[RMDB]
RNA sequence: GGGAACGACUCGAGUAGAGUCGAAAAACGCUGGGACUGUCUACUCCGAAUGCUCAUAGGGAGCUAGUCUGAAGCGCGCACGGACUAGCGUUGAUCUAUGAGAGGUAGAGUAGAGCAGUCCUGUGCUGAAGCGCGCACGGCAACCGAAAGGUGCGAAGUAUUGACAAUAGUUCGCUAUUGUCAAUACAAAAGAAACAACAACAACAAC
Reactivity to DMS in 0.01 (KOAc 150mM, MgCl2 10mM, bicine 150mM(pH8.5), 24C), signal-to-noise 2, nucleotides 027 to 156: a060c070g010c040u000g030g000g030a030c010u010g010u000c010u000a000c010u010c000c090g050a090a130u030g030c000u000c010a030u010a070g020g010g010a050g040c000u000a020g010u010c010u000g000a040a050g050c010g000c040g050c010a300c000g000g020a030c000u000a020g090c000g020u010u000g020a030u010c010u000a020u010g000a030g020a030g030g030u000a020g010a030g000u000a030g010a100g040c000a030g000u000c000c000u010g010u000g010c000u010g010a120a040g000c020g040c000g000c020a300c050g000g000c000a070a130c020c010g010a110a090a160g030g030u000g010c000g000a130a200
Reactivity to 2A3 in 0.01 (KOAc 150mM, MgCl2 10mM, bicine 150mM(pH8.5), 24C), signal-to-noise 6, nucleotides 027 to 156: a000c020g000c010u030g000g000g010a000c000u000g010u030c000u000a010c000u020c050c080g240a140a070u120g010c000u000c000a000u000a000g010g000g000a010g010c000u000a000g000u000c000u020g060a210a140g020c010g000c010g000c010a020c010g010g000a000c000u000a000g010c000g140u180u010g000a000u000c000u000a000u000g000a010g020a010g070g070u300a140g000a010g000u000a000g000a020g010c000a000g000u000c000c000u000g000u000g000c000u030g020a110a030g000c010g000c000g000c000a000c000g030g000c010a010a010c010c000g030a060a040a020g010g000u010g010c010g020a180a020

Chemical mapping of a 207-nucleotide RNA with DMS and 2A3.
Reactivities are given for positions 27 through 156.
High 2A3 reactivity points to a flexible backbone, as in loops and unpaired stretches.
DMS adducts were read by reverse transcription with MarathonRT.
The data come from the RNA Mapping Database (RMDB), library RNAMAK.